[RMDB]
Structure probing data (2A3) for a 177-nucleotide construct. As a SHAPE reagent, 2A3 marks flexible, mostly unpaired nucleotides at the ribose 2'-OH. It was measured as part of the RMDB library OK1LIB.
RNA sequence: GGGAACGACUCGAGUAGAGUCGAAAACAAGUCACGUCUGAAAAGCGAAAGCCCUAAGAUAUGCAGCUGUGAAGACUUGACGCAGCGGAGCUCGCAGAACUUCGGUUCUGCAAAAGAAACAACAACAACUGCUCGGCAUGUUCGCAUGCCGAGCAGUAAAAGAAACAACAACAACAAC
Reactivity to 2A3 in 0.01 (KOAc 150mM, MgCl2 10mM, bicine 150mM(pH8.5), 24C), signal-to-noise 1, nucleotides 027 to 126: c000a000a010g000u020c000a010c010g010u010c020u030g050a020a030a000a000g010c000g000a160a000a000g030c040c000c000u050a030a010g020a020u150a020u070g000c010a010g000c000u000g000u020g010a010a000g000a000c000u000u000g000a000c000g000c000a000g010c010g000g000a000g010c010u010c040g000c000a000g000a000a000c000u020u030c080g070g010u000u010c000u000g020c000a000a000a000a000g000a000a000a000c000a000a000c000a000a000c010a000